[RMDB]
Source information:
This 177-nucleotide RNA was probed chemically with DMS and 2A3. It was measured as part of the RMDB library OK2TST. The 2A3 profile rests on 926 reads. Conditions: 150 mM KOAc, 10 mM MgCl2 and 150 mM bicine (pH 8.5), 24 C. High 2A3 reactivity points to a flexible backbone, as in loops and unpaired stretches.

RNA sequence: GGGAACGACUCGAGUAGAGUCGAAAAAUUUGACGACACUGGACGUCAAAGGCCAAGUCACCAUCGAUUUGCAUGUGGAGAAGGAGACCAACUUCAUUGUGCUGCACAUCCAGGACCUCAAUGUCAAGCUCCCCUCCAUAUUCGUAUGGAGGGGAGCAAAAGAAACAACAACAACAAC
Reactivity to DMS in 0.01 (KOAc 150mM, MgCl2 10mM, bicine 150mM(pH8.5), 24C), signal-to-noise 1, nucleotides 027 to 126: a110u020u000u000g010a010c000g010a100c070a170c100u020g000g000a140c000g000u060c000a000a000a000g020g000c080c070a080a060g000u010c010a070c050c020a000u000c060g000a050u020u020u050g000c040a020u000g040u000g000g000a080g020a150a090g010g000a110g000a020c030c050a060a170c020u000u000c020a090u000u000g020u010g040c080u010g000c150a050c160a030u010c000c000a050g000g000a060c000c080u000c060a140a190u050g010u010c090a040a180
Reactivity to 2A3 in 0.01 (KOAc 150mM, MgCl2 10mM, bicine 150mM(pH8.5), 24C), signal-to-noise 1, nucleotides 027 to 126: a010u060u000u000g000a020c010g000a000c050a040c190u130g000g040a020c000g000u000c000a000a000a020g060g030c010c000a060a070g070u040c040a010c090c010a110u090c080g100a070u120u000u120g090c030a090u060g000u020g100g020a040g010a090a040g080g000a110g080a070c040c000a020a030c060u070u040c000a010u050u090g030u050g080c020u000g030c040a020c010a060u000c010c000a010g010g040a040c000c000u060c090a120a030u130g020u050c010a140a000